An RNA of 207 nucleotides, treated with 2A3 and DMS and read out base by base.
The data come from the RNA Mapping Database (RMDB), library RNAMAK.
The reactions ran in a buffer of 150 mM KOAc, 10 mM MgCl2 and 150 mM bicine (pH 8.5), at 24 C.

RNA sequence: GGGAACGACUCGAGUAGAGUCGAAAAGCGUACUACUCGUCCCUGCAGCGAAGAACAUACUAUUGGCUUAUCCCAAAUAGGAUAAGCAGGGUAUGGGAGCUGCAGAGGACGAGUAUCGCAAAAGUUUAGCGUAUCUGUUCGCAGAUACGCUAAACAAUCAACACUAUAGCUUCGGCUAUAGUGUUGAAAAAGAAACAACAACAACAAC
Reactivity to 2A3 in 0.01 (KOAc 150mM, MgCl2 10mM, bicine 150mM(pH8.5), 24C), signal-to-noise 5, nucleotides 027 to 156: g000c000g030u090a120c050u000a010c000u010c010g000u000c000c000c000u000g010c000a000g000c020g150a300a040g030a100a040c010a010u010a000c010u070a200u300u250g190g000c000u000u010a010u020c000c010c030a150a300a300u290a140g010g000a000u000a000a000g000c000a000g060g000g000u010a000u010g010g000g020a010g010c000u010g000c000a000g030a140g000g000a010c000g000a000g000u010a000u020c000g000c000a060a040a040a060g000u010u010u000a000g000c000g000u000a000u010c000u020g080u080u040c300g010c070a000g010a000u010a000c000g000c000u000a000a000a000c000a000a010
Reactivity to DMS in 0.01 (KOAc 150mM, MgCl2 10mM, bicine 150mM(pH8.5), 24C), signal-to-noise 2, nucleotides 027 to 156: g020c010g030u010a060c140u010a010c000u010c000g020u000c000c000c000u020g000c000a010g010c000g030a140a160g000a100a170c020a000u000a020c000u000a200u000u000g040g020c000u000u000a020u000c000c010c010a060a170a220u000a040g000g000a020u010a000a010g020c000a050g010g010g010u000a000u020g000g010g000a240g000c000u000g000c000a000g000a050g070g000a020c010g010a000g010u010a000u000c000g030c020a090a090a120a190g000u010u000u000a020g010c000g030u000a010u000c000u000g020u000u020c300g020c010a030g000a010u000a000c020g000c000u000a000a010a000c000a080a180